[RMDB]
RNA sequence: GGGAACGACUCGAGUAGAGUCGAAAAGCCAUGAGUCGCAACGCAAAGCCGCGGUAAGUGGAGUUAGCGAGAAGAGACUAGGCUUUGGUUUCUUCAAGUGAAGCGGUCACCAAUCAGGUGUGGUAGUAGGAGCCUGCAUGGUUCGCCAUGCAGGCAAGUAUCUGUGCUAGUUCGCUAGCACAGAUACAAAAGAAACAACAACAACAAC
Reactivity to 2A3 in 0.01 (KOAc 150mM, MgCl2 10mM, bicine 150mM(pH8.5), 24C), signal-to-noise 2, nucleotides 027 to 156: g090c000c030a060u130g040a000g030u040c020g060c060a080a060c070g000c040a140a110a060g000c030c030g020c090g100g100u230a230a130g010u060g040g040a120g000u130u100a040g000c030g010a050g010a090a030g030a020g000a010c010u030a050g080g040c000u060u050u070g030g000u010u040u000c010u020u010c030a040a030g030u050g110a080a000g040c010g000g070u060c010a030c020c030a010a170u160c070a080g000g030u030g010u020g050g050u100a030g000u030a040g070g220a030g000c000c000u000g020c010a000u000g000g000u020u010c030g000c060c000a000u010g010c000a000g020g000c000a010a010
Reactivity to DMS in 0.01 (KOAc 150mM, MgCl2 10mM, bicine 150mM(pH8.5), 24C), signal-to-noise 1, nucleotides 027 to 156: g050c030c070a110u000g010a300g020u000c020g020c020a080a040c010g000c030a070a140a210g000c000c000g000c010g030g030u000a020a200g030u010g000g010a160g000u000u010a300g040c050g000a300g020a090a060g000a060g020a040c000u000a100g050g030c090u020u000u010g000g030u000u000u010c030u010u000c020a060a300g010u000g010a100a130g000c040g000g000u000c040a050c070c010a080a110u020c110a070g000g020u010g000u010g010g010u000a020g020u000a060g000g000a120g040c020c000u010g000c000a000u000g000g010u000u010c300g040c030c010a020u010g000c020a010g010g010c000a000a010

Chemical mapping of a 207-nucleotide RNA with 2A3 and DMS. For 2A3 the reverse transcriptase was SuperScript II with manganese. The RNA was probed in 150 mM KOAc, 10 mM MgCl2 and 150 mM bicine (pH 8.5) at 24 C. Values cover nucleotides 27 to 156.